The record gives the reactivity of an RNA of 177 nucleotides to 2A3. For 2A3 the reverse transcriptase was SuperScript II with manganese.

RNA sequence: GGGAACGACUCGAGUAGAGUCGAAAAAUGCACUGGGUGGCUGCAUGGCGUCGGGAGUGUUGGGUGAGAAUGGAUCCCACAUGCCUGACGGAUGUAAUAAAACUGCGAUUACGGUGCCUUUGCGGUCGCGAUAGCCUGGAUUCGUCCAGGCUAUCGCAAAAGAAACAACAACAACAAC
Reactivity to 2A3 in 0.01 (KOAc 150mM, MgCl2 10mM, bicine 150mM(pH8.5), 24C), signal-to-noise 1, nucleotides 027 to 126: a000u070g000c000a000c090u030g000g040g000u010g060g000c000u000g000c030a050u070g080g000c000g000u000c000g000g000g060a060g000u000g120u200u090g000g020g020u120g030a060g120a150a150u260g070g080a000u030c000c040c000a010c000a000u060g000c000c050u000g000a000c000g000g000a010u000g020u000a010a130u030a160a100a010a100c090u100g020c010g000a000u050u130a120c000g000g010u030g020c000c010u010u010u110g100c030g140g000u170c140
It was measured as part of the RMDB library OK1LIB.